[RMDB]
RNA sequence: GGGAACGACUCGAGUAGAGUCGAAAAGUAAUACCAAGGCAGCGAAAAGAACAGCCCGUUGAGCAAGUAUGACGAUCCCAUGAAGCCGUGGAUGACGCACAGCGUAGGACGCGGGCCGUCGCGGUGGCACCGCUGUACAUUUCGAUGUACAGCGGUGAAAAGAAACAACAACAACAAC
Reactivity to 2A3 in 0.01 (KOAc 150mM, MgCl2 10mM, bicine 150mM(pH8.5), 24C), signal-to-noise 4, nucleotides 027 to 126: g010u030a000a070u020a060c020c030a050a040g070g000c020a020g000c020g090a070a050a060a070g110a120a090c020a020g040c010c020c020g040u010u060g010a030g040c030a090a000g020u040a060u060g030a030c020g040a050u020c000c010c010a020u140g080a040a020g030c020c010g000u050g080g060a040u060g020a020c060g030c040a100c040a150g000c010g040u050a080g130g040a010c010g020c000g020g030g000c000c010g010u010c000g000c010g020g000u040g020g030
Reactivity to DMS in 0.01 (KOAc 150mM, MgCl2 10mM, bicine 150mM(pH8.5), 24C), signal-to-noise 5, nucleotides 027 to 126: g010u000a080a060u010a130c030c030a080a160g000g010c020a060g000c030g010a060a090a080a120g010a100a110c100a110g020c060c040c030g010u000u000g020a070g010c070a140a080g000u000a040u010g020a070c070g000a110u000c010c000c010a090u000g020a090a180g000c020c000g030u000g000g020a080u000g010a040c070g010c050a070c080a060g020c010g020u000a090g030g010a300c060g020c020g000g010g010c030c020g030u000c020g000c030g000g020u000g000g010